RNA sequence: GGGAACGACUCGAGUAGAGUCGAAAACACAGACCAAGGUAUCGUGCCACGGCAUGUUCCACCUUGGCCAUUUGGUCACGGUCCAGAUAGUCGACCGGAUCGCCGUGCACAUAGACGAUGCCGAUCGGUCUUCUGUCUGCUUCGGCGGACAGAAGGCAAAAGAAACAACAACAACAAC
Reactivity to 2A3 in 0.01 (KOAc 150mM, MgCl2 10mM, bicine 150mM(pH8.5), 24C), signal-to-noise 9, nucleotides 027 to 126: c110a010c040a030g120a050c020c030a050a040g010g000u010a000u030c010g010u030g090c080c010a020c010g010g000c040a060u210g070u060u010c020c010a060c030c030u030u050g000g000c010c000a140u150u110u260g010g000u030c040a020c130g030g020u010c020c010a040g060a150u120a050g120u140c060g020a040c030c020g010g010a020u040c040g000c000c000g000u010g020c060a030c020a100u130a020g130a020c040g000a000u010g010c000c000g000a030u060c040g010
Reactivity to DMS in 0.01 (KOAc 150mM, MgCl2 10mM, bicine 150mM(pH8.5), 24C), signal-to-noise 9, nucleotides 027 to 126: c090a110c190a090g010a090c040c040a130a140g000g010u000a010u000c000g010u000g010c190c010a030c060g000g000c000a110u040g020u000u010c030c030a070c120c130u020u010g000g000c020c020a080u010u030u030g020g000u000c030a070c130g000g000u010c020c050a110g010a090u020a060g010u010c060g000a040c170c060g000g000a020u010c130g010c010c000g030u000g000c080a150c150a130u060a100g010a060c020g000a010u000g000c000c000g000a060u030c130g000

Record summary:
Chemical mapping of a 177-nucleotide RNA with 2A3 and DMS. For 2A3 the reverse transcriptase was SuperScript II with manganese. For 2A3, 82,629 sequencing reads were counted.